Structure probing data (2A3 and DMS) for a 177-nucleotide construct. For DMS the reverse transcriptase was MarathonRT. The reactions ran in a buffer of 150 mM KOAc, 10 mM MgCl2 and 150 mM bicine (pH 8.5), at 24 C. 2A3 adducts were read by reverse transcription with SuperScript II with manganese.

[RMDB]
RNA sequence: GGGAACGACUCGAGUAGAGUCGAAAAUCAAACGAUUUCGAUCGUUUGAAACGGACCACUCCUGCGGCAGUUAAGGCCAUACGGACAGCCGGGUCCACUGCCAGUCAUUCGGUUUCGACCGAAUGAACUACAGGGAUUGGUUCGCCAAUCCCUGUAGAAAAGAAACAACAACAACAAC
Reactivity to 2A3 in 0.01 (KOAc 150mM, MgCl2 10mM, bicine 150mM(pH8.5), 24C), signal-to-noise 2, nucleotides 027 to 126: u030c000a000a000a010c010g000a010u030u060u160c230g070a020u010c000g000u000u010u000g000a040a000a010c060g060g020a020c020c010a030c060u060c010c020u100g070c050g020g000c000a060g010u110u120a050a040g030g000c000c030a160u190a090c030g020g050a060c060a000g300c030c040g040g020g010u000c000c040a010c020u020g020c040c010a020g080u020c000a010u010u010c000g000g040u040u070u090c180g100a010c010c000g000a000a000u000g000a000a010
Reactivity to DMS in 0.01 (KOAc 150mM, MgCl2 10mM, bicine 150mM(pH8.5), 24C), signal-to-noise 3, nucleotides 027 to 126: u000c000a000a010a000c000g010a010u000u000u000c170g020a020u000c000g030u010u000u000g020a000a090a140c150g000g000a020c040c020a140c110u000c000c000u000g020c210g020g030c000a050g030u010u010a040a160g000g020c000c020a090u020a300c160g010g000a040c250a110g000c070c020g020g030g020u000c000c070a090c060u020g000c000c040a220g000u000c000a010u000u010c000g020g000u000u000u010c190g000a050c000c010g010a010a000u000g000a010a140